[RMDB]
RNA sequence: GGGAACGACUCGAGUAGAGUCGAAAAGUACGACAACUUAUUACGCAUCUUCGUACGAUUGAUGCUAAGAUUAGUGGCGAAAGCCACAAGCACGGGAAUUCAUAUGUCAGAUCCGAGAGGAUUUGACGUCCUAGCCUGUGCAAGACUAGGUCAGACAGACUACUAUGGCGUUCGCGCCAUAGUAGUCAAAAGAAACAACAACAACAAC
Reactivity to 2A3 in 0.01 (KOAc 150mM, MgCl2 10mM, bicine 150mM(pH8.5), 24C), signal-to-noise 2, nucleotides 027 to 156: g050u020a010c040g070a020c080a040a070c060u010u190a050u070u070a140c120g000c000a000u020c040u060u030c000g190u110a100c240g120a110u020u130g030a040u000g000c010u000a010a000g000a100u140u140a020g000u010g020g000c020g050a020a000a010g010c000c010a040c100a060a030g000c000a000c000g010g030g000a020a080u170u100c100a070u140a050u290g000u000c000a000g000a010u000c000c000g000a000g000a010g020g000a000u000u000u020g000a000c000g010u000c030c030u010a080g000c000c000u010g020u000g000c010a000a020g020a040c130u120a010g040g030u060c020a020g020a070c050a040